[RMDB]
RNA sequence: GGGAACGACUCGAGUAGAGUCGAAAAACGUCAGAUACGCCGACCAGUGACAAACUUAUCCGACUGGCACCCAAAGCCGUCUGUCGCAGCGGGUGUAAGAUUUUUUAAGACAGACUUGCCGCCGGUAGCCCGAUCAGGGGCAUCACCGGAUGGCGAGGCAAUUACUAGCGUUCGCGCUAGUAAUUGCAAAAGAAACAACAACAACAAC
Reactivity to 2A3 in 0.01 (KOAc 150mM, MgCl2 10mM, bicine 150mM(pH8.5), 24C), signal-to-noise 1, nucleotides 027 to 156: a000c030g000u010c030a020g030a080u070a090c040g050c090c020g080a050c010c030a010g010u040g210a100c040a090a100a070c080u140u090a050u020c010c000g100a020c070u010g020g020c000a000c000c010c000a000a000a020g000c000c030g010u000c030u000g010u020c030g000c010a000g010c010g030g020g000u000g000u010a010a010g010a000u040u160u100u100u030u300a040a010g000a000c000a000g010a010c010u030u050g000c000c010g000c010c000g000g010u010a020g000c000c010c010g010a150u190c170a090g000g040g020g000c010a010u050c050a000c000c000g150g010a260u040g000g040c010g000a040g040